RNA sequence: GGGAACGACUCGAGUAGAGUCGAAAACGCGACGAAAACUCAUAUCUUGAUUAUGUGGAAAUUUGCACACUUUGGCUGAACUCGAAAUUCGAACAAAAGAUUCAGGCGAAUUUGGCGAUGAUCGAAACUAGUAUCUCCAUUUCGAUGGAGAUACUAGAAAAGAAACAACAACAACAAC
Reactivity to 2A3 in 0.01 (KOAc 150mM, MgCl2 10mM, bicine 150mM(pH8.5), 24C), signal-to-noise 4, nucleotides 027 to 126: c040g010c040g030a060c040g080a090a010a080a020c050u040c030a040u050a070u110c050u090u130g080a090u080u180a040u080g060u060g030g120a070a090a130u070u080u140g010c040a040c010a010c100u030u000u030g050g000c020u030g030a020a020c030u010c030g010a030a080a100u180u110c030g030a040a030c030a060a110a000a030g070a050u100u050c020a020g070g010c030g040a060a080u080u030u070g050g000c020g010a020u050g030a060u060c050g040a050a010a040
Reactivity to DMS in 0.01 (KOAc 150mM, MgCl2 10mM, bicine 150mM(pH8.5), 24C), signal-to-noise 4, nucleotides 027 to 126: c110g020c050g010a050c080g000a080a070a110a140c080u000c050a040u000a020u000c110u010u000g010a090u000u000a030u000g010u000g000g000a050a060a110u000u000u000g020c030a060c070a070c140u000u000u000g010g010c030u000g000a060a040c070u010c090g020a050a070a170u010u010c050g000a040a130c180a040a050a070a060g010a110u000u000c060a040g000g000c040g000a030a040u000u000u010g010g010c070g000a060u000g000a110u000c020g020a090a080a140